[RMDB]
RNA sequence: GGGAACGACUCGAGUAGAGUCGAAAAGAGGUGUGGCAGUGUCGUCUGGCAGGUUGUGCCUUGAAGCGCUGGGCUGAGUGGACAAGUACAGGCACGAUUUGUACGCGUGUCCAGAUGAUCAGCCAUGGCGAGAUUCAACCUUCGGGUUGGAUUUCGCAAAAGAAACAACAACAACAAC
Reactivity to 2A3 in 0.01 (KOAc 150mM, MgCl2 10mM, bicine 150mM(pH8.5), 24C), signal-to-noise 5, nucleotides 027 to 126: g070a040g020g110u050g010u020g030g000c030a050g030u020g010u290c010g010u010c030u020g010g000c000a000g000g010u000u000g000u000g000c000c000u000u010g000a010a000g000c020g010c080u040g020g020g030c010u010g010a010g040u040g000g010a020c010a040a010g020u020a020c000a020g010g000c000a000c100g020a070u030u010u030g040u030a020c020g020c040g080u050g040u020c000c000a000g020a100u090g010a040u040c020a020g000c000c010a020u040g040
Reactivity to DMS in 0.01 (KOAc 150mM, MgCl2 10mM, bicine 150mM(pH8.5), 24C), signal-to-noise 3, nucleotides 027 to 126: g000a290g050g040u080g090u000g010g030c120a300g140u190g030u060c140g040u000c040u020g020g020c040a010g000g010u000u000g010u000g000c020c020u010u010g000a050a030g000c030g000c020u020g000g000g000c010u000g000a100g000u000g000g000a050c000a040a060g000u020a010c060a010g010g000c050a070c080g000a070u000u030u010g000u000a010c020g010c110g000u010g000u000c020c000a150g000a230u050g020a190u020c240a290g000c030c050a130u010g010

An RNA of 177 nucleotides, treated with 2A3 and DMS and read out base by base.
2A3 adducts were read by reverse transcription with SuperScript II with manganese.
For DMS, 3,297 sequencing reads were counted.
The reactions ran in a buffer of 150 mM KOAc, 10 mM MgCl2 and 150 mM bicine (pH 8.5), at 24 C.